[RMDB]
RNA sequence: GGGAACGACUCGAGUAGAGUCGAAAAGUCCUGGAGACGGGUGAGUGUCGGCGAGGACGUUUCGUUGCUUCCAGCUCCGGGGCCUACGGGGCGCGGCCCGACCCAGAAACUACUAUGGGCCGUGGAAUCAGAUAGUGGAUUUCGAUCCACUAUCUGAAAAAGAAACAACAACAACAAC
Reactivity to DMS in 0.01 (KOAc 150mM, MgCl2 10mM, bicine 150mM(pH8.5), 24C), signal-to-noise 4, nucleotides 027 to 126: g010u000c010c010u000g010g010a050g020a060c060g020g020g030u010g020a040g010u010g020u010c030g010g000c020g020a140g010g010a150c160g020u000u000u010c030g030u010u000g010c020u000u000c020c020a160g000c010u000c010c010g010g000g010g020c020c030u010a070c100g000g000g000g010c050g010c030g010g000c000c000c000g000a080c060c030c040a170g010a080a090a090c160u000a070c130u000a140u010g000g000g010c010c000g020u000g000g010a110a160
Reactivity to 2A3 in 0.01 (KOAc 150mM, MgCl2 10mM, bicine 150mM(pH8.5), 24C), signal-to-noise 3, nucleotides 027 to 126: g020u000c010c000u000g020g000a010g020a070c070g080g040g070u200g090a110g030u080g090u180c020g000g010c020g020a060g120g180a160c080g010u110u120u020c010g010u020u090g000c010u030u020c000c010a020g000c000u000c000c010g030g000g000g010c010c000u030a070c040g010g020g000g010c020g000c000g020g000c000c000c000g030a060c000c030c020a000g130a040a140a020c100u220a020c020u070a180u290g000g000g000c000c000g000u000g020g030a060a100
Chemical mapping of a 177-nucleotide RNA with DMS and 2A3. Source: RMDB library OK2TST, as collected in RNAgym.